Chemical mapping of a 177-nucleotide RNA with DMS and 2A3. Values cover nucleotides 27 to 126. For 2A3, 910 sequencing reads were counted. The RNA was probed in 150 mM KOAc, 10 mM MgCl2 and 150 mM bicine (pH 8.5) at 24 C. For 2A3 the reverse transcriptase was SuperScript II with manganese. The DMS profile rests on 2,006 reads. For DMS the reverse transcriptase was MarathonRT.
RNA sequence: GGGAACGACUCGAGUAGAGUCGAAAAUACCCCUGGCAGAGGACACAAAGGGCCUGGCGCUGCCAUUUGAGGGUGAUCCUUACUGUAUUUGUACUAGGACAGCCUAUUCUAAGUCUGUUUGUGGGGGCCUAGUAUCCGAGUUCGCUCGGAUACUAGGAAAAGAAACAACAACAACAAC
Reactivity to DMS in 0.01 (KOAc 150mM, MgCl2 10mM, bicine 150mM(pH8.5), 24C), signal-to-noise 2, nucleotides 027 to 126: u000a170c040c010c010c040u000g000g030c040a030g000a030g010g000a100c120a140c080a080a100a130g000g020g010c020c040u000g020g000c120g000c060u000g010c020c000a070u000u010u010g020a120g030g000g000u010g000a160u000c010c010u000u010a040c100u010g010u010a100u000u000u020g000u000a050c200u010a050g000g010a050c050a140g030c020c020u000a120u010u000c190u010a080a120g000u000c010u000g020u000u010u010g040u010g000g010g000g010g020
Reactivity to 2A3 in 0.01 (KOAc 150mM, MgCl2 10mM, bicine 150mM(pH8.5), 24C), signal-to-noise 2, nucleotides 027 to 126: u080a030c000c000c000c000u020g030g000c000a020g010a020g130g020a070c020a010c030a130a140a060g060g090g030c030c000u000g030g050c020g050c090u110g000c000c000a050u100u080u040g050a070g040g020g090u030g070a150u000c020c000u020u080a060c010u090g170u250a260u140u190u110g060u030a050c080u020a020g000g030a000c000a010g100c010c000u070a110u140u060c060u110a070a050g050u000c050u060g190u080u150u140g110u070g010g000g000g000g000